Source: RMDB library OK2TST, as collected in RNAgym. An RNA of 177 nucleotides, treated with 2A3 and DMS and read out base by base. For DMS the reverse transcriptase was MarathonRT.
[RMDB]
RNA sequence: GGGAACGACUCGAGUAGAGUCGAAAAUCAAACGGCUAUAGCGAGACGGUAGACGACGACCAGAACUACUUCUGCUCACGUAAGCGAGUAAUCACGUGAGCGCCUACGUCAUGUGAGAUCUCGGUCAGUUAUCUGGGGUAUUCGUACCCCAGAUAACAAAAGAAACAACAACAACAAC
Reactivity to 2A3 in 0.01 (KOAc 150mM, MgCl2 10mM, bicine 150mM(pH8.5), 24C), signal-to-noise 4, nucleotides 027 to 126: u110c040a060a010a060c040g060g000c040u060a030u090a150g040c040g040a020g010a050c050g030g010u020a020g020a070c030g010a010c050g050a040c000c030a020g030a070a060c050u100a020c000u110u050c030u110g000c010u000c000a010c010g050u040a070a030g080c060g050a050g110u090a070a100u110c030a010c010g010u000g000a030g050c000g000c000c000u090a080c050g060u070c030a020u100g020u020g080a090g010a080u040c020u000c020g040g010u030c030a020
Reactivity to DMS in 0.01 (KOAc 150mM, MgCl2 10mM, bicine 150mM(pH8.5), 24C), signal-to-noise 4, nucleotides 027 to 126: u010c120a070a120a100c070g010g000c050u000a040u000a120g000c050g010a080g020a070c090g000g020u000a060g000a080c060g000a080c120g000a070c070c030a090g000a060a090c110u000a080c090u000u000c080u020g010c030u000c020a040c040g030u010a120a110g040c080g010a080g020u010a100a090u000c050a030c010g010u000g010a030g000c030g010c080c050u000a060c120g000u000c080a030u010g030u000g010a060g000a100u000c010u000c030g020g010u000c080a100